[RMDB]
RNA sequence: GGGAACGACUCGAGUAGAGUCGAAAACAUCAGUCGUUCGCGACUGAUGAAACGUGGAAGCGCUGCACGAAAAAGUCGAUCGAAUACCGAUCGACAAGCGCUAAAGAUAGGCCUUCGGGCCUAUCAAGGAAUGGAUUGAGUUCGCUCAAUCCAUUCCAAAAGAAACAACAACAACAAC
Reactivity to DMS in 0.01 (KOAc 150mM, MgCl2 10mM, bicine 150mM(pH8.5), 24C), signal-to-noise 1, nucleotides 027 to 126: c000a000u000c000a000g000u000c000g010u000u030c280g050c010g010a030c010u000g000a000u020g010a010a070a180c010g020u020g040g000a070a080g010c020g020c010u000g030c000a000c050g030a100a060a050a090a070g000u000c000g000a010u010c000g050a150a250u010a160c240c010g010a000u000c000g020a010c000a020a000g000c000g000c000u000a100a120a090g000a020u000a020g000g030c000c000u010u020c220g010g030g000c000c000u010a000u000c000a110a110
Reactivity to 2A3 in 0.01 (KOAc 150mM, MgCl2 10mM, bicine 150mM(pH8.5), 24C), signal-to-noise 2, nucleotides 027 to 126: c000a000u010c000a000g030u000c000g020u030u050c250g030c010g100a010c010u000g000a010u010g000a010a000a000c000g000u000g010g040a100a030g030c000g000c010u030g010c030a010c050g180a150a110a030a050a010g000u010c000g000a000u010c010g000a070a020u110a300c070c030g000a010u000c000g010a000c000a000a000g000c000g000c000u000a020a010a000g000a000u000a000g000g010c000c000u020u090c210g060g000g020c000c000u010a000u000c000a000a000
This 177-nucleotide RNA was probed chemically with DMS and 2A3. Source: RMDB library M2PK50, as collected in RNAgym. 2A3 adducts were read by reverse transcription with SuperScript II with manganese.